About this RNA
The record gives the reactivity of an RNA of 207 nucleotides to 2A3 and DMS. Reactivities are given for positions 27 through 156. The RNA was probed in 150 mM KOAc, 10 mM MgCl2 and 150 mM bicine (pH 8.5) at 24 C.
RNA sequence: GGGAACGACUCGAGUAGAGUCGAAAACUCUGACAGCGCGAAGCAAUCAACUGCUCUCUAAUCAGAAUUCCACUGCGUCUGCGCUGGCUGGGGCUGGUGGUUCUUCUCUAAUUGGAUUUAUGCAAAGCGGCGCAGGCUCUAUCGCUCGCACGCUUGAUAUGAUAGGGAUGUUCGCAUCCCUAUCAUAAAAAGAAACAACAACAACAAC
Reactivity to 2A3 in 0.01 (KOAc 150mM, MgCl2 10mM, bicine 150mM(pH8.5), 24C), signal-to-noise 1, nucleotides 027 to 156: c030u020c040u070g040a040c000a030g010c000g020c020g090a080a020g000c020a020a070u130c040a030a130c010u070g050c020u000c010u000c020u190a110a080u120c040a040g030a070a100u110u000c030c010a050c050u040g000c010g050u020c050u080g020c020g000c010u020g060g000c030u090g000g020g020g000c040u060g010g020u040g040g000u060u030c000u090u050c030u000c040u070a060a160u060u030g030g000a000u070u140u060a120u160g100c070a000a100a000g020c000g000g020c030g040c090a030g040g030c000u040c040u090a170u110c070g010c050u050c040g000c010a100c080g000c010u010u010g030a030
Reactivity to DMS in 0.01 (KOAc 150mM, MgCl2 10mM, bicine 150mM(pH8.5), 24C), signal-to-noise 1, nucleotides 027 to 156: c010u000c030u020g000a090c040a080g010c040g080c020g000a030a090g030c010a070a100u010c060a060a080c110u000g020c050u000c020u000c030u010a160a190u000c020a020g020a100a190u000u000c070c040a090c060u000g010c080g020u000c030u000g070c040g050c040u000g040g040c040u000g020g020g000g040c000u010g000g040u000g010g020u000u000c010u000u000c040u010c050u000a050a120u010u020g010g000a140u000u000u000a110u030g010c030a050a060a020g020c040g030g000c120g070c020a040g000g000c000u000c040u020a110u020c250g030c040u000c060g080c000a040c050g020c010u000u010g020a140